[RMDB]
RNA sequence: GGGAACGACUCGAGUAGAGUCGAAAAGAUAUGGAACCGUACAGCUUUUGACGCUCAACGAUCGGAAACGAUCGAAUUGAGCGAUAAGCUGGCGGUUCCUAAGUCAAAACCCACGUUCGCGUGGGAAUCCUUAUUAAGGGUUCGCCCUUAAUAAGGAAAAAGAAACAACAACAACAAC
Reactivity to DMS in 0.01 (KOAc 150mM, MgCl2 10mM, bicine 150mM(pH8.5), 24C), signal-to-noise 6, nucleotides 027 to 126: g000a030u000a300u010g010g010a010a000c000c000g010u000a110c010a010g010c000u000u000u010u000g010a250c100g010c000u000c000a010a070c020g010a010u000c000g000g000a070a080a230c010g010a010u000c010g000a070a120u000u000g010a010g020c000g010a040u010a010a010g040c000u000g000g010c000g000g000u010u000c000c000u000a000a060g010u000c030a120a070a100a180c010c000c000a020c010g010u000u010c230g040c010g030u000g000g010g000a040a050
Reactivity to 2A3 in 0.01 (KOAc 150mM, MgCl2 10mM, bicine 150mM(pH8.5), 24C), signal-to-noise 7, nucleotides 027 to 126: g000a000u040a010u120g000g010a000a000c020c010g030u270a300c120a010g000c020u120u170u240u300g300a160c080g000c010u000c000a010a020c000g000a000u010c010g010g020a050a050a050c010g000a010u010c010g010a040a090u040u020g000a000g000c000g010a000u020a020a010g000c000u000g000g010c000g000g000u000u000c000c000u000a000a000g000u000c000a010a050a070a180c000c020c010a000c000g030u080u080c300g000c010g150u020g000g000g030a010a080